The record gives the reactivity of an RNA of 207 nucleotides to 2A3. The RNA was probed in 150 mM KOAc, 10 mM MgCl2 and 150 mM bicine (pH 8.5) at 24 C. For 2A3 the reverse transcriptase was SuperScript II with manganese. Source: RMDB library M2RFPK, as collected in RNAgym. The 2A3 profile rests on 613 reads.
RNA sequence: GGGAACGACUCGAGUAGAGUCGAAAAGAAACGCAAGGCCGCUGACCGACGGGAUAUUGUGGGGCUUACCACAGGGGACGCGGCCUUAUCACUUGCCUUUUAAGCCGACCGUCUGGGCUGCAUACAAACCACCCAACUAUCUUCGGAUAGUUGGGAACACAGCGAUACAGUUCGCUGUAUCGCUGUGAAAAGAAACAACAACAACAAC
Reactivity to 2A3 in 0.01 (KOAc 150mM, MgCl2 10mM, bicine 150mM(pH8.5), 24C), signal-to-noise 1, nucleotides 027 to 156: g010a000a040a010c070g030c070a020a020g000g000c000c000g000c040u090g020a020c020c000g080a020c070g100g090g010a060u150a100u220u030g000u080g000g000g070g040c190u170u150a060c000c000a000c010a000g050g000g000g000a000c010g020c000g010g000c000c000u000u000a000u000c000a000c020u080u090g060c000c000u080u100u060u120a000a070g040c000c030g100a080c020c000g020u060c000u020g020g020g000c020u040g010c000a070u120a130c080a000a060a030c070c040a070c010c000c000a020a000c000u010a000u000c000u030u000c020g090g000a000u000a010g010u010u000g010g010g010a010a000